[RMDB]
RNA sequence: GGGAACGACUCGAGUAGAGUCGAAAAGACGCCUGUGUGGCGAAGCGAGCAUGAGAUGGAGCCGCAAGAGAAGAUGAGAUAGAAGCGGCGCGAUAGAUUGCUCGCAAAAAGAUCCAUCUCACAGAGACGCUCACUAUGGAUUCGUCCAUAGUGAGCGAAAAGAAACAACAACAACAAC
Reactivity to DMS in 0.01 (KOAc 150mM, MgCl2 10mM, bicine 150mM(pH8.5), 24C), signal-to-noise 1, nucleotides 027 to 126: g020a260c000g000c020c000u000g000u000g080u030g010g040c040g030a160a220g000c000g000a010g000c020a020u000g000a210g030a030u060g000g000a300g040c000c000g020c100a190a180g010a100g000a210a070g000a090u030g020a070g020a120u100a050g000a170a040g000c000g020g000c000g010c250g000a030u000a010g000a090u000u000g000c030u010c000g000c050a000a000a150a000a060g040a050u040c020c000a070u000c010u000c040a010c040a050g000a220g000a050
Reactivity to 2A3 in 0.01 (KOAc 150mM, MgCl2 10mM, bicine 150mM(pH8.5), 24C), signal-to-noise 2, nucleotides 027 to 126: g060a010c030g000c000c010u070g070u130g090u150g040g000c000g000a000a000g040c000g010a000g000c000a090u090g000a050g000a060u010g030g010a020g020c000c000g030c020a080a000g110a000g060a160a000g050a220u280g080a120g060a220u190a130g200a180a040g030c000g010g000c000g000c020g090a010u020a100g020a030u030u060g010c000u000c000g030c000a000a010a000a000a030g060a000u010c000c000a000u000c060u010c010a070c010a000g060a000g000a060
This 177-nucleotide RNA was probed chemically with DMS and 2A3. Conditions: 150 mM KOAc, 10 mM MgCl2 and 150 mM bicine (pH 8.5), 24 C. High 2A3 reactivity points to a flexible backbone, as in loops and unpaired stretches. It was measured as part of the RMDB library OK1LIB. For 2A3, 1,239 sequencing reads were counted.